[RMDB]
An RNA of 207 nucleotides, treated with 2A3 and DMS and read out base by base. Values cover nucleotides 27 to 156. The DMS profile rests on 4,652 reads. For DMS the reverse transcriptase was MarathonRT. 2A3 adducts were read by reverse transcription with SuperScript II with manganese.
RNA sequence: GGGAACGACUCGAGUAGAGUCGAAAAGCGUACUACGGAGGCGCAUCAGAGACGUGGGCACUCUCGUCCCAAAUAGGACGAGUUGCCAGCACGUCGACGAAGAUGCGAACUACCUCCGUAUCGCAAAUCGUAGUAUCAGUUCGCUGAUACUACGAAAGGAAUUGGAUUACUUCGGUAAUCCAAUUCCAAAAGAAACAACAACAACAAC
Reactivity to 2A3 in 0.01 (KOAc 150mM, MgCl2 10mM, bicine 150mM(pH8.5), 24C), signal-to-noise 3, nucleotides 027 to 156: g000c000g040u070a030c040u000a000c040g000g000a000g010g000c000g000c000a000u000c020a030g080a000g000a040c000g000u020g000g000g000c000a050c070u140c000u000c000g010u030c030c020c000a270a300a110u300a060g010g000a000c010g000a000g010u010u010g010c010c010a030g020c000a000c010g000u020c010g000a010c010g060a030a110g000a000u010g010c010g030a080a050c080u120a100c110c000u000c000c000g000u000a000u020c000g000c000a000a150a000u030c000g000u010a000g000u010a010u000c000a010g010u030u090c200g080c160u000g000a000u000a000c000u000a000c000g000a020a010a000
Reactivity to DMS in 0.01 (KOAc 150mM, MgCl2 10mM, bicine 150mM(pH8.5), 24C), signal-to-noise 2, nucleotides 027 to 156: g050c000g040u000a070c090u000a000c020g010g020a020g000g020c040g040c010a050u000c010a060g010a300g020a030c010g050u000g010g010g000c020a030c150u000c010u000c000g010u000c000c000c020a080a160a210u020a030g030g020a060c000g010a030g030u000u000g010c010c010a070g050c010a000c010g000u000c000g000a200c160g010a120a180g030a050u000g010c030g020a050a130c000u000a120c010c000u000c000c000g050u000a000u000c000g020c010a100a070a060u000c020g020u000a000g020u000a010u010c000a000g010u000u000c300g020c020u000g010a030u000a000c000u000a000c000g000a010a060a120